[RMDB]
Structure probing data (2A3 and DMS) for a 207-nucleotide construct. The RNA was probed in 150 mM KOAc, 10 mM MgCl2 and 150 mM bicine (pH 8.5) at 24 C. In probing experiments dimethyl sulfate is read out at A N1 and C N3, which are open when not base-paired. The data come from the RNA Mapping Database (RMDB), library OK3TST. Reactivities are given for positions 27 through 156.
RNA sequence: GGGAACGACUCGAGUAGAGUCGAAAACUGCCAAUGCUGGUCAUAUGCGAGCUUCUUGCCAUCGCUGAAAUCGCCAUCCUUGCCCUUGAAGUCAACUACAUGGCCGGUAGACGGGCUAUGCAGAUCGACCUUUCCGCCGUAACCCAGCGGUGAGCCAACCCUCAAAAAGUUUCGACUUUUUGAGGGUAAAAGAAACAACAACAACAAC
Reactivity to 2A3 in 0.01 (KOAc 150mM, MgCl2 10mM, bicine 150mM(pH8.5), 24C), signal-to-noise 4, nucleotides 027 to 156: c070u060g000c020c010a070a070u090g010c030u050g040g070u070c040a040u090a040u240g030c030g030a020g010c020u080u030c030u100u150g040c030c030a110u040c040g010c030u010g040a060a060a040u070c070g030c020c020a040u070c020c000u020u070g020c000c010c010u010u050g060a060a010g010u040c020a040a020c040u060a030c000a030u030g010g000c020c000g010g070u080a080g050a190c100g030g000g000c000u010a000u040g030c010a000g040a180u090c040g020a070c000c000u030u080u020c010c020g020c000c000g030u040a060a070c010c000c000a000g000c000g000g010u020g020a000g010c000c020a030
Reactivity to DMS in 0.01 (KOAc 150mM, MgCl2 10mM, bicine 150mM(pH8.5), 24C), signal-to-noise 2, nucleotides 027 to 156: c050u000g030c000c030a090a120u010g000c050u000g040g000u010c040a110u000a100u000g010c040g050a130g050c030u010u000c060u000u000g020c010c010a080u000c040g050c020u030g040a040a080a060u000c040g030c050c000a100u000c020c030u010u000g020c020c020c060u000u000g000a070a080g000u010c020a050a170c030u000a060c070a050u010g020g020c000c030g050g020u000a130g010a130c040g030g020g010c010u010a020u000g000c030a050g010a120u010c030g000a030c010c010u000u000u000c010c010g010c020c010g010u000a070a150c070c020c030a180g020c000g030g010u000g000a120g030c040c070a140